An RNA of 177 nucleotides, treated with 2A3 and read out base by base.
[RMDB]
RNA sequence: GGGAACGACUCGAGUAGAGUCGAAAAACGCGCGACUAAUCGUAUGUAUGCUAUGCCGCACAGGCCAAUACAAUUUAUUUGGGUAACUAAACCGCUCUAGUCGCUGGCUCAUUUGCAUACCACUACAGGCUAUCAUCGCGUUCGCGCGAUGAUAGCCAAAAGAAACAACAACAACAAC
Reactivity to 2A3 in 0.01 (KOAc 150mM, MgCl2 10mM, bicine 150mM(pH8.5), 24C), signal-to-noise 1, nucleotides 027 to 126: a000c050g000c000g000c000g110a050c000u070a020a110u150c090g000u080a080u140g000u000a000u000g010c080u020a000u150g000c000c010g030c000a120c000a030g000g020c010c000a000a060u020a100c000a080a130u210u000u050a090u100u280u000g080g000g000u090a040a070c040u040a080a000a300c000c030g050c020u000c050u020a010g000u010c000g000c050u140g070g000c000u050c130a010u030u000u010g000c150a000u000a000c000c000a030c030u080a090c070a070